[RMDB]
RNA sequence: GGGAACGACUCGAGUAGAGUCGAAAAAAGGUUAACUAUCCACAUUUGAUACGACUAGUACUUUUUGCCCAUCCAUUUUUGACUCGUGAAUUUUUUAACAUGUGAAUUUUGACAAUCUUCUCCGUGGGUAUUGUACUGACUUCGGUCAGUACAAUACAAAAGAAACAACAACAACAAC
Reactivity to DMS in 0.01 (KOAc 150mM, MgCl2 10mM, bicine 150mM(pH8.5), 24C), signal-to-noise 1, nucleotides 027 to 126: a070a000g020g020u010u000a050a090c080u000a080u010c020c050a030c080a150u000u020u000g010a110u000a090c080g010a060c120u000a050g010u010a070c050u000u020u000u000u010g000c030c000c010a080u000c080c050a100u000u000u000u000u000g000a050c040u000c050g020u000g000a040a020u000u030u020u000u020u000a040a180c160a020u010g010u020g010a010a090u000u010u000u000g000a120c080a060a070u010c020u000u000c030u010c010c040g020u010g020g010
Reactivity to 2A3 in 0.01 (KOAc 150mM, MgCl2 10mM, bicine 150mM(pH8.5), 24C), signal-to-noise 1, nucleotides 027 to 126: a000a020g070g010u050u010a140a010c010u010a000u110c070c010a050c010a120u130u120u210g100a060u050a110c040g010a020c090u030a020g110u040a050c030u010u000u070u040u090g010c020c000c000a020u000c020c010a050u120u020u020u010u100g030a020c000u000c040g060u100g150a160a210u010u000u060u040u110u100a120a000c010a050u030g000u060g040a070a070u050u120u020u060g000a000c010a030a040u020c050u050u000c030u000c040c020g020u030g100g120